[RMDB]
RNA sequence: GGGAACGACUCGAGUAGAGUCGAAAAGAUAUGGAUCGUGAUCGCAGCGUUGAAGUCGGAAACGAUGGAGCUGGAUCCGAUCCUAAGUCAAAAUCGUAUCCCAUUGGUUCGCCAAUGGGAUACGAAACGGAGGAGGAAUGUUCGCAUUCCUCCUCCGAAAAGAAACAACAACAACAAC
Reactivity to 2A3 in 0.01 (KOAc 150mM, MgCl2 10mM, bicine 150mM(pH8.5), 24C), signal-to-noise 2, nucleotides 027 to 126: g020a020u080a020u170g020g000a000u030c060g120u300g090a010u020c080g000c300a000g030c050g210u300u050g000a010a000g000u000c020g010g070a030a120a050c020g000a010u010g030g000a000g050c010u000g000g000a000u020c010c010g000a000u040c000c000u020a020a000g000u030c040a020a000a000a300u050c000g000u000a010u000c010c010c020a050u010u000g060g050u020u060c300g010c140c010a010a000u020g000g000g000a000u000a000c000g000a010a000a000
Reactivity to DMS in 0.01 (KOAc 150mM, MgCl2 10mM, bicine 150mM(pH8.5), 24C), signal-to-noise 1, nucleotides 027 to 126: g000a060u010a300u010g000g010a030u000c010g000u010g000a000u000c000g010c000a010g010c000g010u000u000g020a150a150g000u020c000g000g000a120a100a240c000g020a000u000g000g000a020g040c010u010g010g000a010u010c010c020g000a000u000c000c000u020a000a040g010u030c010a050a150a080a160u000c010g000u020a010u010c000c000c010a030u000u010g000g000u040u000c300g020c000c000a000a000u000g000g000g010a000u000a000c000g000a000a030a170